Record summary:
The data come from the RNA Mapping Database (RMDB), library OK1LIB. An RNA of 177 nucleotides, treated with 2A3 and read out base by base. The reactions ran in a buffer of 150 mM KOAc, 10 mM MgCl2 and 150 mM bicine (pH 8.5), at 24 C. For 2A3, 856 sequencing reads were counted. 2A3 adducts were read by reverse transcription with SuperScript II with manganese. Reactivities are given for positions 27 through 126.
RNA sequence: GGGAACGACUCGAGUAGAGUCGAAAACAAUACCGGCGUCAACAGAAAAAUCGCACGAAGCCAAGAAAGGCAAGAAAAAGAAUGACGCUCGGUUACGAGCGCAAAAAGCGCUCGAAUCGUGCGAUAAGUACAGCUAGCACUUCGGUGCUAGCUGUACAAAAGAAACAACAACAACAAC
Reactivity to 2A3 in 0.01 (KOAc 150mM, MgCl2 10mM, bicine 150mM(pH8.5), 24C), signal-to-noise 1, nucleotides 027 to 126: c020a000a070u030a030c000c000g000g000c000g000u000c000a090a080c050a090g300a110a210a000a000a000u010c060g080c010a000c020g010a040a030g000c000c000a040a040g190a300a090a120g050g000c060a040a010g270a020a050a020a000a020g050a000a050u050g000a000c020g030c070u180c040g070g050u000u010a000c000g000a000g000c000g010c010a000a040a000a300a190g000c000g030c000u000c000g030a000a030u000c000g000u000g000c000g000a000u010a020a000